This 177-nucleotide RNA was probed chemically with DMS and 2A3. Values cover nucleotides 27 to 126. High DMS reactivity at an A or C suggests that its Watson-Crick edge is free. The DMS profile rests on 2,485 reads. For 2A3, 1,903 sequencing reads were counted. Conditions: 150 mM KOAc, 10 mM MgCl2 and 150 mM bicine (pH 8.5), 24 C.
RNA sequence: GGGAACGACUCGAGUAGAGUCGAAAAUAAGGGUAAAGCGGCUGGCAUGUCGUCCGGGCAUAAAGUCAUAUCGCCUGAACAGAGAACAUGUUACUGACUUUGAAACGCGAUUUUAUAAUUUGCUGUCGGAAUAGGAAUACUUCGGUAUUCCUAUUCCAAAAGAAACAACAACAACAAC
Reactivity to DMS in 0.01 (KOAc 150mM, MgCl2 10mM, bicine 150mM(pH8.5), 24C), signal-to-noise 3, nucleotides 027 to 126: u020a100a070g010g010g000u000a020a030a050g010c030g010g010c180u000g010g020c050a040u000g000u010c060g000u010c010c000g000g000g030c030a040u000a050a090a140g000u010c180a050u000a050u010c240g020c000c010u010g020a030a060c030a150g020a130g010a090a060c040a010u010g010u000u000a090c050u000g000a080c020u000u000u000g000a080a090a070c110g000c030g000a030u000u000u010u010a090u010a070a090u000u010u000g030c030u000g020u010c180
Reactivity to 2A3 in 0.01 (KOAc 150mM, MgCl2 10mM, bicine 150mM(pH8.5), 24C), signal-to-noise 2, nucleotides 027 to 126: u060a000a030g040g020g050u050a050a040a000g020c020g060g000c100u070g020g040c040a040u040g030u010c000g000u030c020c030g000g040g010c020a030u060a050a090a060g100u110c050a040u060a020u120c070g000c000c010u010g030a030a000c020a020g090a010g010a170a000c000a000u040g010u000u060a050c010u000g200a140c000u000u060u070g060a070a100a020c040g040c000g020a000u000u080u060u050a200u020a030a170u010u060u200g020c020u040g110u100c020